[RMDB]
Record summary: The record gives the reactivity of an RNA of 177 nucleotides to 2A3 and DMS. The data come from the RNA Mapping Database (RMDB), library M2PK50. For 2A3 the reverse transcriptase was SuperScript II with manganese. The reactions ran in a buffer of 150 mM KOAc, 10 mM MgCl2 and 150 mM bicine (pH 8.5), at 24 C. The 2A3 profile rests on 6,805 reads.
RNA sequence: GGGAACGACUCGAGUAGAGUCGAAAAUCCCCAUAGUUCGCUAUGGGGAAAACCCGUACCGCGUAGCACGCGGAUAGGAGCGAAGAUAUCCACGGCACGCGAAAACCUUCGCCUUCGGGCGAAGGAACCAUCAUUUUCUGUUCGCAGAAAAUGAUGGAAAAGAAACAACAACAACAAC
Reactivity to 2A3 in 0.01 (KOAc 150mM, MgCl2 10mM, bicine 150mM(pH8.5), 24C), signal-to-noise 3, nucleotides 027 to 126: u010c000c000c000c000a010u010a010g000u020u040c190g030c090u000a000u010g000g000g000g020a020a010a010a030c000c000c010g000u080a110c070c000g000c000g000u040a090g030c050a130c300g000c010g010g000a000u020a010g050g040a080g120c130g060a100a050g040a190u020a010u030c000c010a020c000g010g000c000a000c010g000c010g020a050a020a030a030c000c000u000u000c000g000c010c000u040u110c280g110g000g000c000g000a000a000g010g000a000a000
Reactivity to DMS in 0.01 (KOAc 150mM, MgCl2 10mM, bicine 150mM(pH8.5), 24C), signal-to-noise 2, nucleotides 027 to 126: u000c000c000c000c000a000u000a000g000u000u020c190g020c020u000a020u010g010g010g010g010a010a020a040a140c000c000c000g020u020a050c290c000g000c000g000u000a140g010c000a100c010g060c020g010g020a000u010a010g030g020a140g050c200g000a130a100g010a140u000a020u000c000c000a030c010g000g000c000a020c000g000c010g000a060a060a090a130c000c000u000u000c000g010c000c000u000u010c140g020g010g010c010g000a020a000g000g000a030a050